Chemical mapping of a 207-nucleotide RNA with 2A3 and DMS.
[RMDB]
RNA sequence: GGGAACGACUCGAGUAGAGUCGAAAAUGUGUCCUAGGGAAUUGGAAGGUCAUCCUUCAUAGGAUCGUGUGGAAGUCCUGCUCGGGGCGGAAGCAUUAAAACCAUUCGAGCUAGUCAAUGCGUGGCGUUACCUCCAGGUUCUUCGGAACCUGGAGAACAUUUUGAGUAAGUUCGCUUACUCAAAAUGAAAAGAAACAACAACAACAAC
Reactivity to 2A3 in 0.01 (KOAc 150mM, MgCl2 10mM, bicine 150mM(pH8.5), 24C), signal-to-noise 4, nucleotides 027 to 156: u100g030u000g010u020c000c030u020a040g000g050g100a060a130u190u120g050g000a080a040g030g020u210c080a120u110c030c000u040u080c040a080u060a050g000g000a010u020c050g010u020g000u020g030g010a020a000g020u020c000c010u050g060c140u080c100g010g000g000g000c010g010g010a010a000g010c000a010u060u200a030a040a020a060c030c020a030u050u070c050g030a010g030c010u040a030g050u110c050a110a050u100g020c070g020u030g030g010c020g010u060u130a070c000c010u010c000c000a010g000g020u000u000c000u040u080c170g050g010a000a000c000c000u000g020g000a000g000a000a000
Reactivity to DMS in 0.01 (KOAc 150mM, MgCl2 10mM, bicine 150mM(pH8.5), 24C), signal-to-noise 3, nucleotides 027 to 156: u010g050u000g020u000c020c010u000a100g020g030g000a090a120u010u000g020g010a050a080g040g020u010c050a150u000c010c000u000u010c110a150u000a060g020g010a050u000c050g030u000g010u000g000g010a300a240g000u000c000c030u000g010c130u000c090g000g010g020g010c020g000g000a260a180g020c060a070u000u000a040a080a090a120c030c040a100u010u010c020g020a030g020c030u000a110g020u020c060a010a070u000g020c070g000u000g030g020c040g010u000u010a060c110c000u000c000c000a010g010g020u000u000c000u000u010c300g040g000a020a010c010c000u000g000g000a000g010a020a050
The RNA was probed in 150 mM KOAc, 10 mM MgCl2 and 150 mM bicine (pH 8.5) at 24 C.
Reactivities are given for positions 27 through 156.
For DMS the reverse transcriptase was MarathonRT.